[RMDB]
RNA sequence: GGGAACGACUCGAGUAGAGUCGAAAAAUUCUUACAUUCUGAACGAAUAUUUCUACUUUCAUAGUGUAGCUAACUGUGUUAAUUAAAAGGUAAGGCUAUCCUUCUGUAGAACUGUUUGUCAUACAGGUAAAUAUCAAAUCCAUGAUGCUUACAUGAAUCAUCACCUACGUUUCGACGUAGGUGAUGAAAAAGAAACAACAACAACAAC
Reactivity to 2A3 in 0.01 (KOAc 150mM, MgCl2 10mM, bicine 150mM(pH8.5), 24C), signal-to-noise 2, nucleotides 027 to 156: a000u070u040c020u030u060a100c040a140u100u100c030u080g090a070a020c010g000a030a000u050a020u130u020u020c000u000a010c000u060u180u090c180a080u160a080g030u060g000u040a020g000c010u000a000a080c020u000g070u020g080u300u090a150a170u200u120a090a180a060a010g070g040u100a110a180g030g000c000u010a020u100c010c010u020u060c080u060g000u000a000g000a020a010c000u010g000u040u000u070g050u000c050a040u120a090c020a040g120g040u060a000a000a060u090a030u040c020a090a050a050u010c010c020a020u040g000a020u070g030c010u080u010a040c020a000u010g110a060a030

The record gives the reactivity of an RNA of 207 nucleotides to 2A3. It was measured as part of the RMDB library OK3TST. For 2A3 the reverse transcriptase was SuperScript II with manganese.